[RMDB]
Background
The record gives the reactivity of an RNA of 177 nucleotides to 2A3 and DMS. The RNA was probed in 150 mM KOAc, 10 mM MgCl2 and 150 mM bicine (pH 8.5) at 24 C. For 2A3 the reverse transcriptase was SuperScript II with manganese. The 2A3 profile rests on 940 reads.
RNA sequence: GGGAACGACUCGAGUAGAGUCGAAAAGAACAGCGAGCUGCUGCUGCACCUGUACGAGCAGGGAUCUGAGGCGAUCGACGCCGGCGCGGAUGCCCGGUUCGGUUUCUACGUCUGGGAGGCCGACGCGCGGAGAAGGUCUAUUCGUAGACCUUCUCCGAAAAGAAACAACAACAACAAC
Reactivity to 2A3 in 0.01 (KOAc 150mM, MgCl2 10mM, bicine 150mM(pH8.5), 24C), signal-to-noise 1, nucleotides 027 to 126: g020a200a070c030a030g000c000g030a060g050c050u040g000c000u040g000c030u010g020c090a050c020c060u080g070u090a080c040g000a060g050c020a050g060g010g030a060u020c100u130g020a040g020g060c000g010a070u090c020g050a060c060g050c080c010g010g020c050g020c020g100g050a100u260g070c020c000c040g020g000u020u000c000g000g000u000u070u000c080u140a120c060g080u010c050u130g010g030g010a060g000g000c050c000g010a110c050g000c000g030
Reactivity to DMS in 0.01 (KOAc 150mM, MgCl2 10mM, bicine 150mM(pH8.5), 24C), signal-to-noise 2, nucleotides 027 to 126: g010a120a150c080a060g000c040g010a170g030c010u000g020c010u000g010c020u020g000c090a130c020c010u000g030u010a150c180g010a080g000c020a060g010g010g010a070u010c040u010g000a190g000g010c080g010a150u020c050g000a090c160g030c010c030g020g010c040g010c050g000g020a110u010g020c040c010c010g010g010u000u000c030g020g010u010u000u000c070u000a110c080g010u010c050u000g000g000g020a090g000g010c000c050g000a080c080g010c110g010